An RNA of 207 nucleotides, treated with DMS and 2A3 and read out base by base. The reactions ran in a buffer of 150 mM KOAc, 10 mM MgCl2 and 150 mM bicine (pH 8.5), at 24 C. The data come from the RNA Mapping Database (RMDB), library OK3TST. The 2A3 profile rests on 1,136 reads. The DMS profile rests on 2,294 reads. For 2A3 the reverse transcriptase was SuperScript II with manganese.
RNA sequence: GGGAACGACUCGAGUAGAGUCGAAAAGGACUGGACCAGGACCACAGGUACCGCCGGACCCAUAUAAGGUACCAACCAGAAUAAGACAGAUACAGAAUGGGCAGCACACUGUAGCCAGUCAGAAACGCGUGCCUAGUCUACGGCACGAGUGAGCUAAAUCCAUAGUCCGAUUCGUCGGACUAUGGAUAAAAGAAACAACAACAACAAC
Reactivity to DMS in 0.01 (KOAc 150mM, MgCl2 10mM, bicine 150mM(pH8.5), 24C), signal-to-noise 2, nucleotides 027 to 156: g070g000a060c020u030g000g000a180c030c040a170g000g000a210c040c080a120c100a060g000g000u010a010c010c010g020c000c020g000g000a080c020c000c030a050u000a180u000a070a110g000g010u010a080c020c000a110a120c100c010a190g000a060a130u000a100a100g010a200c020a030g030a100u000a150c020a040g010a050a130u020g000g000g030c040a130g000c010a090c020a120c010u020g020u010a130g000c030c030a120g020u000c020a090g000a150a050a020c010g000c020g010u000g020c000c030u000a180g040u020c130u010a060c120g010g030c030a020c000g000a020g040u020g020a070g030c040u000a040a150
Reactivity to 2A3 in 0.01 (KOAc 150mM, MgCl2 10mM, bicine 150mM(pH8.5), 24C), signal-to-noise 2, nucleotides 027 to 156: g040g010a010c020u060g010g040a010c020c020a050g000g050a070c000c050a060c100a120g000g000u010a030c000c010g060c030c040g050g050a060c030c000c000a010u060a020u020a100a000g040g000u000a010c000c010a010a020c040c010a040g060a150a080u110a120a040g090a050c080a050g050a050u130a130c090a000g130a080a080u090g030g000g000c030a010g020c030a030c010a000c070u030g010u010a010g020c000c000a010g020u000c020a000g050a040a150a020c040g000c000g040u000g000c000c010u030a030g070u000c050u080a020c050g020g000c000a000c000g000a010g000u050g010a000g000c010u070a110a130